Notes
Source: RMDB library M2RFPK, as collected in RNAgym. Chemical mapping of a 207-nucleotide RNA with 2A3. The RNA was probed in 150 mM KOAc, 10 mM MgCl2 and 150 mM bicine (pH 8.5) at 24 C. 2A3 adducts were read by reverse transcription with SuperScript II with manganese.

[RMDB]
RNA sequence: GGGAACGACUCGAGUAGAGUCGAAAAAACUCAGCUAGGGAGAGUAUAACAUUCAUGUUGACGAGAUCUAGACGAAACACAGAGGAAAAUUAUUAAUCACUGGAUAGUAUUAGUAAUGACUCUGUGUAAAACUCUUCUACGUUCGCGUAGAAGAGAACGAAGUGAGUAGCUUCGGCUACUCACUUCGAAAAGAAACAACAACAACAAC
Reactivity to 2A3 in 0.01 (KOAc 150mM, MgCl2 10mM, bicine 150mM(pH8.5), 24C), signal-to-noise 1, nucleotides 027 to 156: a000a000c040u040c040a070g030c010u130a010g020g020g000a020g030a020g030u070a090u020a250a040c040a040u060u170c030a000u200g040u020u010g050a010c000g080a080g000a110u000c030u050a000g070a090c000g020a030a070a000c010a000c000a000g000a020g020g020a060a190a050a000u010u000a000u000u010a010a000u040c050a000c040u030g010g090a100u300a300g000u030a010u000u000a000g020u000a000a000u000g040a020c000u000c000u000g000u000g010u010a000a000a000a000c000u000c000u000u000c000u000a000c000g080u070u030c300g020c010g120u000a000g010a020a000g000a000g000a040a000